[RMDB]
The record gives the reactivity of an RNA of 207 nucleotides to DMS and 2A3. The 2A3 profile rests on 31,500 reads. It was measured as part of the RMDB library RNAMAK. The reactions ran in a buffer of 150 mM KOAc, 10 mM MgCl2 and 150 mM bicine (pH 8.5), at 24 C. For DMS, 7,580 sequencing reads were counted. Values cover nucleotides 27 to 156.

RNA sequence: GGGAACGACUCGAGUAGAGUCGAAAAGGGGUCAUCCUGAGGAGCUUGACAUGAUCGAAUACUGAAGCCUCCACGGUAUGAUCAACAGCAAGCUCUACCCACCAGGAUGACGGAGGCACCCAAAACAAAUAACGAUUAGUUCGCUAAUCGUUAUUUGGUGUAGAAGUAACUUCGGUUACUUCUACACAAAAGAAACAACAACAACAAC
Reactivity to DMS in 0.01 (KOAc 150mM, MgCl2 10mM, bicine 150mM(pH8.5), 24C), signal-to-noise 4, nucleotides 027 to 156: g000g030g040g030u010c000a020u000c010c010u000g010a250g010g000a020g000c000u000u000g010a070c040a300u000g010a020u010c020g010a150a120u010a030c000u010g020a030a100g000c020c010u000c020c010a300c020g000g020u000a030u000g000a040u000c010a060a140c090a140g010c030a020a020g000c020u000c000u000a040c040c010c030a300c020c010a020g000g000a020u000g000a010c010g000g000a010g050g070c010a150c020c020c000a090a090a020a300c010a000a020a010u000a000a020c000g030a030u000u000a010g010u000u010c300g020c030u000a010a000u000c000g010u000u000a000u010u000u000g000
Reactivity to 2A3 in 0.01 (KOAc 150mM, MgCl2 10mM, bicine 150mM(pH8.5), 24C), signal-to-noise 9, nucleotides 027 to 156: g100g010g010g000u000c000a000u000c000c000u000g010a020g010g000a000g000c010u040u030g060a230c060a290u150g000a030u010c040g120a280a110u010a020c000u010g020a090a020g010c000c000u000c000c000a010c010g000g000u010a010u050g010a000u010c040a040a120c070a070g060c000a000a000g000c000u000c000u020a050c040c030c010a010c010c000a000g000g000a000u000g000a000c020g000g000a000g000g000c000a030c000c010c000a030a110a010a040c010a000a000a000u000a000a000c000g000a000u010u010a010g040u050u070c270g010c180u000a000a000u000c000g000u000u000a000u000u000u000g020